[RMDB]
RNA sequence: GGGAACGACUCGAGUAGAGUCGAAAAGAUAUGGACGAGGACAACAGCAUAGGACUCGGAAACGAGUCUAUGACAUGUCCGAGUCCUAAGUCAAAGCUCCAUUUGUGGUUCGCCACAAAUGGAGCAAGACAGAUCAAAGCUUCGGCUUUGAUCUGUCAAAAGAAACAACAACAACAAC
Reactivity to 2A3 in 0.01 (KOAc 150mM, MgCl2 10mM, bicine 150mM(pH8.5), 24C), signal-to-noise 1, nucleotides 027 to 126: g020a010u030a030u050g000g000a000c020g000a000g030g020a020c010a300a010c120a210g160c020a020u040a040g240g170a110c010u000c000g010g010a020a020a000c010g010a000g010u000c010u010a010u030g110a100c020a090u090g000u000c000c000g000a000g000u000c000c000u020a020a000g000u030c010a000a130a150g000c010u010c010c010a020u010u000u020g020u010g000g070u040u110c300g090c130c000a000c000a000a010a000u010g000g010a000g000c000a020a000
Reactivity to DMS in 0.01 (KOAc 150mM, MgCl2 10mM, bicine 150mM(pH8.5), 24C), signal-to-noise 2, nucleotides 027 to 126: g010a050u010a240u000g020g000a000c020g000a300g020g000a000c000a030a110c300a170g010c010a010u030a010g010g000a000c000u000c000g000g000a070a070a160c020g000a000g010u000c000u000a000u000g000a090c110a170u000g000u000c000c000g000a260g010u000c000c000u010a010a080g010u000c020a090a090a140g000c000u000c000c000a010u000u020u000g030u000g000g000u010u000c260g000c000c000a000c000a000a000a020u000g010g010a000g000c000a000a010
Background
Chemical mapping of a 177-nucleotide RNA with 2A3 and DMS. The RNA was probed in 150 mM KOAc, 10 mM MgCl2 and 150 mM bicine (pH 8.5) at 24 C. For DMS, 1,213 sequencing reads were counted.